[RMDB]
RNA sequence: GGGAACGACUCGAGUAGAGUCGAAAAGAUAUGGAGAUUGUGGUGCCAGUUGUGGUCGGAAACGACCAUACAACGGUAAGACCAUUAAUCUCCUAAGUCAAAGGCUAGAUAGUUCGCUAUCUAGCCACCUCUGGCAAAAGUUCGCUUUUGCCAGAGGAAAAGAAACAACAACAACAAC
Reactivity to 2A3 in 0.01 (KOAc 150mM, MgCl2 10mM, bicine 150mM(pH8.5), 24C), signal-to-noise 2, nucleotides 027 to 126: g000a010u070a010u100g000g000a000g000a000u000u030g000u010g020g070u060g140c120c110a140g040u120u020g030u040g000g000u010c000g030g000a020a040a040c010g010a010c010c000a010u040a040c020a030a020c070g000g070u140a300a140g160a050c020c020a010u100u300a020a010u010c000u030c000c010u000a000a000g000u000c020a100a100a080g000g000c010u000a010g010a000u000a010g010u030u050c250g000c200u000a000u000c010u000a000g030c010c010a010
Reactivity to DMS in 0.01 (KOAc 150mM, MgCl2 10mM, bicine 150mM(pH8.5), 24C), signal-to-noise 1, nucleotides 027 to 126: g000a030u000a300u000g000g000a080g030a000u000u010g020u000g000g010u000g010c030c010a040g000u000u020g030u010g000g000u000c000g000g010a120a130a220c040g000a010c010c000a090u020a000c020a160a020c090g010g000u000a140a110g010a160c010c000a000u010u020a010a010u000c000u010c000c010u010a020a120g000u000c010a070a100a100g030g010c010u000a000g000a020u000a010g020u000u020c220g030c000u000a000u000c010u000a000g040c010c000a040
Background: Structure probing data (2A3 and DMS) for a 177-nucleotide construct. 2A3 adducts were read by reverse transcription with SuperScript II with manganese. Conditions: 150 mM KOAc, 10 mM MgCl2 and 150 mM bicine (pH 8.5), 24 C. The 2A3 profile rests on 3,212 reads.